An RNA of 177 nucleotides, treated with 2A3 and DMS and read out base by base. The data come from the RNA Mapping Database (RMDB), library OK2TST. The reactions ran in a buffer of 150 mM KOAc, 10 mM MgCl2 and 150 mM bicine (pH 8.5), at 24 C. For DMS the reverse transcriptase was MarathonRT. Reactivities are given for positions 27 through 126.

[RMDB]
RNA sequence: GGGAACGACUCGAGUAGAGUCGAAAAUUAGGCACCCAAGCCAUUGAUGAACGAGGUCCUUAUACUGAUCGUACCCAGCUAGUAUUGCGAAUAGAUCAGCCUCUGCUCUGGAGUGCCGAGCAGCCGAGGCCUCAUGACCUUUCGAGGUCAUGAGGCCAAAAGAAACAACAACAACAAC
Reactivity to 2A3 in 0.01 (KOAc 150mM, MgCl2 10mM, bicine 150mM(pH8.5), 24C), signal-to-noise 1, nucleotides 027 to 126: u090u030a070g010g000c010a000c020c010c000a010a000g070c000c090a070u080u230g130a140u100g070a010a050c080g010a010g020g050u080c050c060u150u260a090u090a130c070u010g010a010u000c000g040u060a090c030c040c060a050g010c010u070a010g100u170a240u190u170g040c050g000a070a040u030a140g020a020u010c000a010g000c000c000u040c000u000g010c020u000c040u000g110g020a220g140u010g000c030c010g000a010g030c000a000g000c010c000g000a040
Reactivity to DMS in 0.01 (KOAc 150mM, MgCl2 10mM, bicine 150mM(pH8.5), 24C), signal-to-noise 1, nucleotides 027 to 126: u010u010a110g050g000c000a020c000c000c020a090a130g020c030c080a080u010u000g000a300u020g000a030a080c210g000a050g000g000u000c080c080u020u000a030u000a200c100u000g010a020u010c010g030u000a110c050c070c010a110g020c020u000a020g020u040a040u000u020g000c080g050a020a110u000a080g020a020u000c030a030g020c050c000u000c050u040g000c010u010c070u000g000g000a210g000u000g000c020c000g030a010g040c040a080g000c050c020g000a150